[RMDB]
RNA sequence: GGGAACGACUCGAGUAGAGUCGAAAAGGCAGCUACAAGGAUGUAGUUGGCUCCACCCCGCUUCCACUUAUUCUACCAACCAACUCGCACAUCACAUCCAGCAACCCCAUAACAAUUACUGCGGCACAGCCUCCGUAUCAUUCGUGAUACGGAGGCUAAAAGAAACAACAACAACAAC
Reactivity to DMS in 0.01 (KOAc 150mM, MgCl2 10mM, bicine 150mM(pH8.5), 24C), signal-to-noise 1, nucleotides 027 to 126: g000g000c000a020g000c000u050a000c020a080a110g080g040a220u070g050u000a020g070u000u000g000g000c040u030c000c050a170c000c010c020c090g020c140u000u000c000c040a000c000u000u000a000u000u000c030u000a030c020c050a110a140c140c100a110a080c000u010c000g000c120a010c050a030u000c000a060c110a020u050c060c030a090g030c000a000a150c010c000c000c050a020u000a020a060c080a080a060u060u020a080c130u000g030c040g000g000c070a020c140
Reactivity to 2A3 in 0.01 (KOAc 150mM, MgCl2 10mM, bicine 150mM(pH8.5), 24C), signal-to-noise 3, nucleotides 027 to 126: g040g000c010a000g010c070u000a010c050a040a150g300g050a300u190g000u020a000g000u000u010g070g070c030u020c020c050a070c030c000c000c000g020c020u010u000c000c000a000c030u010u020a030u060u010c020u030a020c010c050a020a020c000c020a010a040c060u010c040g070c030a020c000a080u050c000a040c000a030u010c050c000a000g020c020a000a080c000c020c000c020a040u120a150a080c080a050a000u210u110a110c030u110g050c010g030g010c010a010c020